RNA sequence: GGGAACGACUCGAGUAGAGUCGAAAACCAUAACAGUUCGCUGUUAUGGACUGACGGAAUGCGGAAUAAUUAAUCGUCCGCUUACGAUUAAUACCGACUAUAAAGCGUAACACUUCGGUGUUACGAAGACCUAAUAUGAGUUCGCUCAUAUUAGGUCAAAAGAAACAACAACAACAAC
Reactivity to 2A3 in 0.01 (KOAc 150mM, MgCl2 10mM, bicine 150mM(pH8.5), 24C), signal-to-noise 9, nucleotides 027 to 126: c000c000a000u000a000a000c000a000g040u070u090c140g070c130u010g000u000u000a000u010g010g020a060c070u080g050a020c030g050g080a130a070u150g020c000g000g070a060a060u150a150a090u170u120a050a060u110c070g030u010c020c040g020c040u010u060a010c000g020a020u020u070a030a030u040a090c010c020g070a020c080u070a070u110a300a120a020g090c010g000u000a000a000c000a000c010u020u080c190g080g000u010g000u000u010a000c000g000a020a010
Reactivity to DMS in 0.01 (KOAc 150mM, MgCl2 10mM, bicine 150mM(pH8.5), 24C), signal-to-noise 8, nucleotides 027 to 126: c010c000a010u000a000a010c010a010g000u010u010c230g030c000u000g010u000u000a010u000g000g000a060c110u010g020a120c080g000g000a090a060u010g010c010g000g020a080a070u000a080a110u010u010a050a040u000c130g000u000c110c110g010c090u000u000a030c010g010a070u000u000a030a040u000a130c000c010g010a100c190u000a110u010a060a080a120g010c000g000u000a000a000c000a000c000u000u010c210g020g010u000g000u000u000a000c000g010a030a060